[RMDB]
RNA sequence: GGGAACGACUCGAGUAGAGUCGAAAACAUGGAGUCUUCGGACUCCAUGCACUACCGAAAUAAUGCCUCGGUAUAAAAGGCAAACGCUUGGAAACAAGGGAACGAUGUCACGAUUCGUCGUGACAAAUGAUAUUGCCAUAUUCGUAUGGCAAUAUCAAAAAGAAACAACAACAACAAC
Reactivity to DMS in 0.01 (KOAc 150mM, MgCl2 10mM, bicine 150mM(pH8.5), 24C), signal-to-noise 7, nucleotides 027 to 126: c010a000u000g000g000a010g010u000c000u000u020c240g040g000a010c010u000c000c000a000u000g000c060a160c050u000a050c010c010g000a080a120a110u010a090a130u010g010c010c000u000c000g000g010u000a090u010a030a020a070a030g000g000c010a030a090a160c250g010c020u000u010g000g000a170a090a180c030a020a010g000g000g000a060a070c120g010a140u000g010u000c000a000c000g000a040u000u010c190g010u000c010g010u000g000a000c000a030a020a080
Reactivity to 2A3 in 0.01 (KOAc 150mM, MgCl2 10mM, bicine 150mM(pH8.5), 24C), signal-to-noise 7, nucleotides 027 to 126: c000a000u010g000g000a010g000u000c020u050u070c270g090g000a000c000u000c000c000a000u000g000c010a040c020u040a010c000c010g030a040a060a090u230a080a050u090g010c000c000u010c010g010g000u040a070u140a270a050a010a000g000g000c030a040a050a040c130g030c050u010u030g010g030a040a030a030c010a020a010g020g010g030a060a040c070g080a100u110g000u010c000a000c000g010a010u050u040c190g030u010c000g000u080g000a000c000a000a010a000

The record gives the reactivity of an RNA of 177 nucleotides to DMS and 2A3. For 2A3, 18,380 sequencing reads were counted. The data come from the RNA Mapping Database (RMDB), library M2PK50.